[RMDB]
RNA sequence: GGGAACGACUCGAGUAGAGUCGAAAAAGCUUUAAUAUCUACAGGCGAAACUGGCAUUAUUUUAGCAGCUCCUACUCAUGCAGCUAAAAAGAUUCUUUCAAAACUAUCAGGGAAAGAAGCGAGUACUAUUCACAGUAUUCUCAAAAUUAACCCAGUAGUUACUCAACCGAUUCGUCGGUUGAGUAACAAAAGAAACAACAACAACAAC
Reactivity to 2A3 in 0.01 (KOAc 150mM, MgCl2 10mM, bicine 150mM(pH8.5), 24C), signal-to-noise 1, nucleotides 027 to 156: a000g130c120u200u070u020a150a020u090a090u080c050u130a080c050a040g020g030c000g090a050a080a000c000u000g000g050c030a050u000u130a040u040u210u020u020a000g000c010a000g020c030u050c010c040u050a020c010u010c070a050u200g000c000a030g010c070u040a000a000a110a000a070g010a040u020u000c000u050u050u040c160a160a140a100a080c070u200a050u200c030a050g000g000g070a000a050a070g010a070a100g120c020g010a000g030u000a000c030u090a090u140u230c100a040c000a040g000u000a010u040u040c030u030c020a060a220a160a100u100u030a070a020c000c000c040a010g000u030a030